[RMDB]
RNA sequence: GGGAACGACUCGAGUAGAGUCGAAAAUAUGCGCUGCGCCGGGCGUCGUGUGAACGGGCGGCCGCCGAUCUGGGGGUGUCCUCGUUGCGCGCUGUGCAGGAUCGCGGGCUGGCGGCGCUGGGCGCGACGCAUUAUCCGGUUUCGACCGGAUAAUGCGAAAAGAAACAACAACAACAAC
Reactivity to 2A3 in 0.01 (KOAc 150mM, MgCl2 10mM, bicine 150mM(pH8.5), 24C), signal-to-noise 7, nucleotides 027 to 126: u240a070u100g050c030g000c020u100g000c010g000c010c000g050g010g000c010g060u090c000g000u050g020u060g070a050a030c040g010g040g000c020g040g030c020c000g070c040c050g050a110u050c130u180g000g010g010g020g080u260g190u300c010c010u030c040g060u060u080g030c050g000c000g010c050u050g040u100g140c030a030g020g030a010u030c000g010c040g010g030g020c000u050g080g060c000g000g000c000g010c010u020g080g030g000c010g000c000g000a010
Reactivity to DMS in 0.01 (KOAc 150mM, MgCl2 10mM, bicine 150mM(pH8.5), 24C), signal-to-noise 2, nucleotides 027 to 126: u040a040u020g000c010g010c050u010g000c010g030c020c000g010g010g020c000g020u000c010g000u000g000u040g010a260a090c040g000g000g050c070g020g000c010c000g030c050c060g010a080u010c070u040g000g020g000g000g020u010g010u070c020c000u010c070g000u000u020g000c060g030c060g020c040u000g000u020g000c050a170g000g000a060u000c020g000c030g000g010g020c020u000g010g020c010g010g000c010g010c010u010g000g010g020c000g010c010g000a100